[RMDB]
An RNA of 177 nucleotides, treated with 2A3 and DMS and read out base by base.
2A3 adducts were read by reverse transcription with SuperScript II with manganese.
Reactivities are rounded to 0.1 and cut off at 0 and 3.
For DMS the reverse transcriptase was MarathonRT.
The RNA was probed in 150 mM KOAc, 10 mM MgCl2 and 150 mM bicine (pH 8.5) at 24 C.
RNA sequence: GGGAACGACUCGAGUAGAGUCGAAAAGGUUGCAGCAUCCGCAAGCAGAUGUCGACUAUCACGUAGGGGGUGCCUUUUACGAACACGGUCACGAGAGCCAGGCGGUCCUUGGUGGUAACGGCCGUCAGACAUAACCUAGGUUCGCCUAGGUUAUGUCAAAAGAAACAACAACAACAAC
Reactivity to 2A3 in 0.01 (KOAc 150mM, MgCl2 10mM, bicine 150mM(pH8.5), 24C), signal-to-noise 3, nucleotides 027 to 126: g050g000u070u120g000c030a010g030c010a070u030c030c030g060c140a040a030g060c040a060g010a080u080g050u090c010g060a060c030u050a040u140c050a030c130g100u130a070g020g010g030g020g030u050g020c000c000u060u090u100u090a060c060g020a090a040c060a000c090g060g020u060c030a020c110g090a080g000a000g080c010c010a010g020g000c020g050g010u050c000c010u040u060g040g020u060g050g010u070a070a000c020g010g010c010c000g010u010c000a010
Reactivity to DMS in 0.01 (KOAc 150mM, MgCl2 10mM, bicine 150mM(pH8.5), 24C), signal-to-noise 5, nucleotides 027 to 126: g020g010u000u000g010c080a120g000c030a050u000c040c040g020c080a110a130g020c080a060g000a060u000g010u000c070g000a100c080u000a070u000c080a070c080g030u000a110g000g010g000g000g040u000g010c050c010u000u000u010u000a070c150g010a070a090c170a070c080g010g000u000c050a070c060g000a130g000a150g000c040c050a070g000g010c090g000g000u000c030c040u010u000g010g040u000g000g000u000a070a160c190g000g010c000c010g000u000c110a090